The record gives the reactivity of an RNA of 177 nucleotides to DMS and 2A3. The data come from the RNA Mapping Database (RMDB), library OK2TST. Values cover nucleotides 27 to 126. For 2A3, 3,274 sequencing reads were counted. Conditions: 150 mM KOAc, 10 mM MgCl2 and 150 mM bicine (pH 8.5), 24 C. DMS adducts were read by reverse transcription with MarathonRT.
RNA sequence: GGGAACGACUCGAGUAGAGUCGAAAAUGAUGCUGAGGUUGUGAUGAACAACAGCGUUAAAUGGUUUAUCCUGGGACAGACAAACUAUGAGACACAGUCCAAUGUGCAGAGCCUGAGAUACGCUCAGUCAUGAAACACAGUUCGCUGUGUUUCAUGAAAAAGAAACAACAACAACAAC
Reactivity to DMS in 0.01 (KOAc 150mM, MgCl2 10mM, bicine 150mM(pH8.5), 24C), signal-to-noise 6, nucleotides 027 to 126: u010g000a050u000g010c010u000g010a090g010g010u000u010g010u010g010a160u010g010a070a030c020a020a050c010a050g010c030g030u000u000a040a110a070u000g010g010u000u000u000a060u010c020c020u000g010g000g020a070c090a160g010a060c070a050a030a060c080u000a040u000g010a150g010a090c060a040c070a050g010u000c060c070a070a080u000g010u010g020c070a100g000a080g020c090c030u010g010a090g000a180u010a110c270g000c010u000c030a070g000
Reactivity to 2A3 in 0.01 (KOAc 150mM, MgCl2 10mM, bicine 150mM(pH8.5), 24C), signal-to-noise 3, nucleotides 027 to 126: u060g010a020u070g000c020u030g010a030g120g080u050u010g030u060g100a140u160g050a020a000c000a000a000c010a010g010c000g000u010u050a070a150a130u120g040g030u070u070u050a110u030c030c010u040g030g010g040a030c040a010g030a010c040a040a090a000c020u080a070u180g070a020g020a050c030a000c020a110g030u000c040c030a050a080u090g020u050g050c040a010g020a020g070c010c010u050g020a050g020a040u110a070c040g030c040u000c000a000g060